[RMDB]
RNA sequence: GGGAACGACUCGAGUAGAGUCGAAAAGAUGUCUUGCCUGCCGGUAGUCGUUGGUCGCGUGUGACAGCACUGCCAACGUCGCAUGCUCACCCUUCCGGUGCGUCUCGGGCUUCCCGUACAGGGCCGGAUGAGCAUAUGCGUUCGCGCAUAUGCUCAUAAAAGAAACAACAACAACAAC
Reactivity to DMS in 0.01 (KOAc 150mM, MgCl2 10mM, bicine 150mM(pH8.5), 24C), signal-to-noise 1, nucleotides 027 to 126: g000a070u010g020u030c010u050u010g000c020c060u020g000c060c000g040g030u040a040g020u000c010g030u000u000g000g020u020c260g000c170g040u060g010u020g010a120c110a160g030c090a080c000u000g000c020c010a020a020c060g010u000c000g000c050a010u020g000c000u000c050a090c050c010c020u020u010c030c040g000g000u000g000c040g000u010c050u040c060g000g000g030c060u020u000c010c020c050g030u040a080c100a140g000g020g020c010c000g030g000
Reactivity to 2A3 in 0.01 (KOAc 150mM, MgCl2 10mM, bicine 150mM(pH8.5), 24C), signal-to-noise 2, nucleotides 027 to 126: g080a050u120g070u080c020u000u010g030c000c010u040g010c010c030g030g020u060a040g060u120c050g010u000u040g030g100u220c070g000c090g070u060g010u040g050a050c020a060g000c040a030c050u140g000c000c010a030a010c020g020u020c010g050c050a010u070g000c010u050c020a020c000c020c000u030u010c070c010g000g000u050g080c020g010u010c050u020c030g000g010g030c050u100u060c000c000c000g010u040a050c050a070g040g000g000c010c000g050g020